[RMDB]
RNA sequence: GGGAACGACUCGAGUAGAGUCGAAAAUCAAGAGAACAACUUUUAACUAUCUGACAUCAGUUGAACUCUUGACAUAGUCGACGAUGUCGAUUUCAUGAAGGAACUUCAUGUAUAAAAGUUGACUAUAGAUAGAAUUGACAUUCGUGUCGGUUCUAUCAAAAGAAACAACAACAACAAC
Reactivity to 2A3 in 0.01 (KOAc 150mM, MgCl2 10mM, bicine 150mM(pH8.5), 24C), signal-to-noise 9, nucleotides 027 to 126: u040c000a020a010g020a000g020a060a030c000a000a010c010u030u020u020u060a070a070c030u050a070u140c070u120g050a020c010a050u030c020a040g010u000u000g030a050a030c000u010c000u030u060g010a000c010a030u060a000g010u000c000g000a000c000g030a030u100g040u060c030g040a030u040u030u040c000a000u000g000a000a000g150g050a040a030c010u000u000c000a000u000g030u020a040u040a030a050a010a010g000u000u000g010a010c000u030a020u030a080
Reactivity to DMS in 0.01 (KOAc 150mM, MgCl2 10mM, bicine 150mM(pH8.5), 24C), signal-to-noise 9, nucleotides 027 to 126: u010c020a040a020g000a050g020a060a260c010a000a020c010u000u010u000u010a040a170c120u010a070u030c120u030g000a070c080a020u000c070a060g010u000u010g010a040a180c000u000c050u000u010g010a060c200a060u010a010g010u000c000g010a010c000g010a080u020g010u000c090g000a060u010u010u010c010a000u000g000a010a010g020g020a110a300c050u000u000c000a000u000g010u000a070u010a030a050a060a110g000u000u000g000a050c020u000a030u020a110
An RNA of 177 nucleotides, treated with 2A3 and DMS and read out base by base.
The RNA was probed in 150 mM KOAc, 10 mM MgCl2 and 150 mM bicine (pH 8.5) at 24 C.
For 2A3, 51,216 sequencing reads were counted.
Reactivities are given for positions 27 through 126.
It was measured as part of the RMDB library OK1LIB.